[RMDB]
RNA sequence: GGGAACGACUCGAGUAGAGUCGAAAAUUCAUUGCACCUUCACGACCGCAAACACUCGAUAGCAGCAUGAUCGGAGAAGGAAGUUGCGUGAAACUUUUCGCAGCAAAGAAACGAGUGGGCCGUAGACGGUGAUACUGCAUUUCGAUGCAGUAUCACCAAAAGAAACAACAACAACAAC
Reactivity to DMS in 0.01 (KOAc 150mM, MgCl2 10mM, bicine 150mM(pH8.5), 24C), signal-to-noise 1, nucleotides 027 to 126: u010u000c040a010u000u020g010c010a000c010c010u000u000c010a090c000g000a090c060c020g000c070a020a050a130c100a070c050u000c140g030a150u020a120g000c050a090g010c150a110u000g000a150u030c010g000g000a090g000a050a030g020g020a150a100g040u000u000g030c080g110u000g020a080a030a080c160u000u000u000u000c020g000c040a090g020c040a120a130a060g010a200a150a090c050g020a040g010u000g000g000g020c000c020g010u020a020g040a090c210
Reactivity to 2A3 in 0.01 (KOAc 150mM, MgCl2 10mM, bicine 150mM(pH8.5), 24C), signal-to-noise 2, nucleotides 027 to 126: u030u010c000a030u030u300g010c000a020c020c000u000u000c060a020c100g010a000c000c030g000c090a150a050a050c010a030c020u030c030g120a110u090a170g070c070a000g000c020a070u110g000a130u130c010g030g010a120g020a090a040g030g020a080a030g070u110u020g020c010g050u060g070a030a130a080c060u010u020u000u070c000g000c070a060g000c040a070a040a080g070a050a150a020c010g030a010g010u030g000g040g000c000c020g100u030a080g040a100c060
The record gives the reactivity of an RNA of 177 nucleotides to DMS and 2A3. For DMS the reverse transcriptase was MarathonRT. Values are in units of 0.01, from 0 to 300, in steps of 10.